[RMDB]
RNA sequence: GGGAACGACUCGAGUAGAGUCGAAAAUCACCUCCAGAGGACCCCUUCAGCGAACAGAACGAUCGCUUCACGCGGUGGGAGCAAGACCAUAGCGAUAGGAAGAGAUGCUAGGAGUUGGUGGCGACCGAAGGACGCUGGUUCGCCAGCGUCAAAAGAAACAACAACAACAAC
Reactivity to DMS in 0.01 (KOAc 150mM, MgCl2 10mM, bicine 150mM(pH8.5), 24C), signal-to-noise 9, nucleotides 027 to 129: u030c060a150c040c020u000c060c010a100g020a050g030g000a120c040c020c010c000u000u010c090a080g020c040g010a050a070c040a090g010a050a090c140g030a070u020c020g020c020u010u020c120a100c100g010c020g030g040u010g010g020g010a050g040c160a080a080g030a010c010c020a060u030a050g020c060g010a080u020a070g010g010a010a050g000a030g020a040u000g010c060u000a040g010g010a060g040u010u010g000g000u000g000g010c040g010a060c020c030g030a080a090g010
Reactivity to 2A3 in 0.01 (KOAc 150mM, MgCl2 10mM, bicine 150mM(pH8.5), 24C), signal-to-noise 9, nucleotides 027 to 129: u050c010a090c020c010u040c020c020a030g020a060g070g020a090c000c010c010c000u070u080c040a020g000c010g030a040a030c020a070g080a090a040c070g060a070u040c030g010c000u100u110c080a060c080g030c030g030g040u040g020g020g010a070g050c060a070a020g050a070c010c010a040u080a030g020c020g080a070u080a070g050g020a020a020g020a000g010a020u070g030c010u030a040g010g020a040g030u070u050g050g020u040g020g010c030g020a010c010c010g020a050a020g120
Source: RMDB library 15KLIB, as collected in RNAgym. This 170-nucleotide RNA was probed chemically with DMS and 2A3. The reactions ran in a buffer of 150 mM KOAc, 10 mM MgCl2 and 150 mM bicine (pH 8.5), at 24 C. For DMS the reverse transcriptase was MarathonRT. For DMS, 122,896 sequencing reads were counted.